[RMDB]
RNA sequence: GGGAACGACUCGAGUAGAGUCGAAAAAUUGAAACACAAAGGUGUGUUUAUACUUGGCAGUUGCAAGAAGCAUAUCAUCAUGACAACUCUCAGGGUCUAUGUCAUUCGCUCCAGGUAUUUCAAAAGCAGUCAUUUUGCAGAUUUGUCUGCCAAGCUGUACACGUCCUUUAUUCGUAAAGGACGUGUAAAAAGAAACAACAACAACAAC
Reactivity to DMS in 0.01 (KOAc 150mM, MgCl2 10mM, bicine 150mM(pH8.5), 24C), signal-to-noise 2, nucleotides 027 to 156: a110u000u010g010a060a030a010c030a040c010a090a130a170g010g010u000g030u010g000u000u000u010a240u000a080c020u000u010g020g010c040a060g030u000u000g130c060a060a050g000a210a250g000c010a050u000a070u010c050a060u000c030a070u000g030a070c020a100a090c140u010c080u000c040a090g010g010g030u000c020u000a050u000g010u000c020a260u000u010c060g010c020u000c000c000a120g010g020u000a030u010u010u010c040a040a100a080a070g000c020a060g000u000c080a120u010u000u000u000g000c060a100g000a150u000u000u020g000u000c030u000g080c000c040a040a040g030c040u010g020
Reactivity to 2A3 in 0.01 (KOAc 150mM, MgCl2 10mM, bicine 150mM(pH8.5), 24C), signal-to-noise 3, nucleotides 027 to 156: a000u110u100g020a010a020a000c020a000c050a050a140a120g240g040u080g010u000g050u060u080u040a080u010a010c010u000u010g020g000c030a000g030u180u130g070c030a020a040g030a040a040g040c020a020u020a000u190c050a010u050c010a010u050g010a020c030a090a070c080u020c030u020c150a030g080g000g000u030c050u060a060u070g070u080c020a020u040u080c050g030c020u000c020c000a010g020g000u060a060u020u140u090c110a080a080a000a000g040c020a020g030u070c060a090u010u090u100u070g010c000a010g020a120u060u080u100g060u040c010u000g000c000c000a020a010g020c020u000g010
An RNA of 207 nucleotides, treated with DMS and 2A3 and read out base by base. For 2A3 the reverse transcriptase was SuperScript II with manganese. The RNA was probed in 150 mM KOAc, 10 mM MgCl2 and 150 mM bicine (pH 8.5) at 24 C. The DMS profile rests on 4,587 reads. For DMS the reverse transcriptase was MarathonRT.